This 207-nucleotide RNA was probed chemically with DMS and 2A3. The reactions ran in a buffer of 150 mM KOAc, 10 mM MgCl2 and 150 mM bicine (pH 8.5), at 24 C.
RNA sequence: GGGAACGACUCGAGUAGAGUCGAAAAUUCGCACAGCAGGGAUCAUUGCGACGUAAUGAAAUCAAUCUCUGAAUUGGUAGCAGAACAUAGGGCAAGGAUGGGGGCUAGUUCCCUGCCUAAGCCCUAUUUCCGUCAGGACACUAUCCAGCCCUGCAUGCCAAUUAACCCCAUUCGUGGGGUUAAUUGGAAAAGAAACAACAACAACAAC
Reactivity to DMS in 0.01 (KOAc 150mM, MgCl2 10mM, bicine 150mM(pH8.5), 24C), signal-to-noise 2, nucleotides 027 to 156: u000u000c050g040c080a100c070a110g010c010a030g000g010g010a170u010c070a130u000u000g000c070g010a090c170g010u020a080a110u010g000a060a140a080u000c020a030a090u000c020u010c040u010g010a090a120u000u000g050g030u010a110g050c030a050g010a010a050c090a050u000a020g050g030g050c020a180a240g030g010a140u010g030g000g020g040g000c030u000a040g010u000u000c010c000c000u000g050c010c000u000a030a290g010c020c000c020u010a000u000u000u010c010c010g010u000c090a130g040g020a100c080a080c090u000a120u000c050c020a080g010c000c010c030u000g000c020a170u000g030
Reactivity to 2A3 in 0.01 (KOAc 150mM, MgCl2 10mM, bicine 150mM(pH8.5), 24C), signal-to-noise 5, nucleotides 027 to 156: u060u000c020g040c000a090c030a030g020c000a000g030g010g020a050u130c070a110u120u270g060c100g040a010c010g030u100a040a130u120g050a130a030a020u040c000a000a010u010c130u040c130u290g120a210a010u010u020g040g000u020a040g070c060a030g010a040a010c030a090u010a000g000g010g000c020a050a010g030g020a100u230g020g000g000g010g020c020u020a060g050u100u060c000c000c000u000g020c000c000u060a100a020g000c000c000c000u000a010u000u000u000c010c010g020u040c010a010g060g020a030c040a030c180u090a100u140c010c010a030g020c000c000c010u000g000c000a000u030g000